[RMDB]
RNA sequence: GGGAACGACUCGAGUAGAGUCGAAAAUCGAUCUUCGGAUCGAAAAAACCGUAGGUCAACGUCAACGCGACGAAGCCACGUAACAUCCGAUUCGAAAGAGUCGGUGGUGGCAGAGCGUUGUUAUUGACCUAAACGGAAAAACGCGCUUCGGCGCGAAGAGGGUAACUAUCUUCGGAUAGUUACCCUCAAAAGAAACAACAACAACAAC
Reactivity to DMS in 0.01 (KOAc 150mM, MgCl2 10mM, bicine 150mM(pH8.5), 24C), signal-to-noise 1, nucleotides 027 to 156: u040c020g000a000u000c010u000u080c300g120g010a010u000c000g020a010a100a090a140a160a090c000c010g030u000a050g000g000u010c000a010a010c040g010u010c000a040a000c030g020c060g030a190c170g000a060a190g010c010c000a020c010g060u000a050a000c180a140u010c000c000g010a000u010u000c000g000a210a210a300g050a000g020u000c020g000g000u000g000g020u000g020g070c000a040g000a300g000c000g010u000u000g000u000u000a040u000u000g000a020c040c000u000a010a000a110c020g000g000a080a090a040a080a110c000g030c000g020c000u010u020c300g070g020c040g000c000g000a000a020
Reactivity to 2A3 in 0.01 (KOAc 150mM, MgCl2 10mM, bicine 150mM(pH8.5), 24C), signal-to-noise 3, nucleotides 027 to 156: u040c010g000a010u000c010u080u120c270g140g020a020u030c030g000a120a020a000a000a000a020c000c010g020u000a010g010g000u010c000a020a020c050g010u010c040a000a010c000g030c010g160a290c030g020a180a000g010c000c000a000c010g010u020a030a000c010a200u110c010c000g000a000u010u020c010g060a110a050a100g000a040g010u000c010g010g000u000g000g010u000g000g000c000a010g000a010g020c020g000u000u000g000u000u020a100u030u000g030a000c000c000u040a110a050a000c010g000g050a110a000a070a000a000c000g010c000g010c010u090u070c280g090g000c000g000c010g020a080a050